[RMDB]
RNA sequence: GGGAACGACUCGAGUAGAGUCGAAAAAAACAUGAUGAGGGCAAGCCACUAGGGUUACAUGUUGUGGGACCCUCACAGGAUGGUAACUAGUACUUUGGUGUAGGUUUGUCAAAAGUUUGAUAUUUACGUAAUAGACCCAAUUCGUUGGGUCUAUUACAAAAGAAACAACAACAACAAC
Reactivity to DMS in 0.01 (KOAc 150mM, MgCl2 10mM, bicine 150mM(pH8.5), 24C), signal-to-noise 5, nucleotides 027 to 126: a050a030a050c070a060u000g010a140u010g010a100g000g000g000c030a070a070g010c000c010a070c040u000a070g000g010g010u010u000a050c070a050u010g010u010u000g010u000g020g000g010a110c080c050c010u000c020a020c040a030g010g010a040u000g010g000u000a050a120c050u000a090g010u010a060c090u000u000u010g020g010u000g010u000a080g010g010u000u000u000g010u000c030a060a100a090a160g010u010u000u000g000a110u000a100u010u000u000a090c220
Reactivity to 2A3 in 0.01 (KOAc 150mM, MgCl2 10mM, bicine 150mM(pH8.5), 24C), signal-to-noise 2, nucleotides 027 to 126: a010a000a010c060a090u070g000a030u020g050a120g030g000g070c040a040a000g040c010c030a030c050u050a030g030g120g050u050u070a010c020a010u180g100u300u010g010u030g010g000g150a300c100c000c000u000c000a000c000a010g000g000a010u040g000g070u070a060a020c030u020a050g100u100a040c060u060u200u050g050g000u090g000u040a090g040g000u030u070u050g050u030c070a050a050a040a040g040u080u040u040g030a070u020a100u130u150u130a030c020